[RMDB]
RNA sequence: GGGAACGACUCGAGUAGAGUCGAAAACCAUAGGAUUUCGAUCCUAUGGCCUGCUAUGUCGCGUAUUAGCUUUUCGACUCUACUUGGGUCGUUCCCACGCGAUGGGGACCGGUUUCGACCGGUCCAAGCACAUCUUCAGAUUCGUCUGAAGAUGUGCAAAAGAAACAACAACAACAAC
Reactivity to DMS in 0.01 (KOAc 150mM, MgCl2 10mM, bicine 150mM(pH8.5), 24C), signal-to-noise 1, nucleotides 027 to 126: c000c000a000u010a000g000g010a000u000u010u020c210g000a040u000c010c000u000a000u000g040g010c190c180u000g030c040u000a000u010g020u020c170g010c300g000u000a060u000u000a040g000c000u000u000u000u000c000g010a060c000u010c000u010a000c010u000u000g000g000g010u000c000g000u010u000c000c000c010a020c050g030c100g000a050u030g050g010g010g010a020c020c000g020g000u000u000u040c180g000a020c000c000g000g000u000c010c010a000a020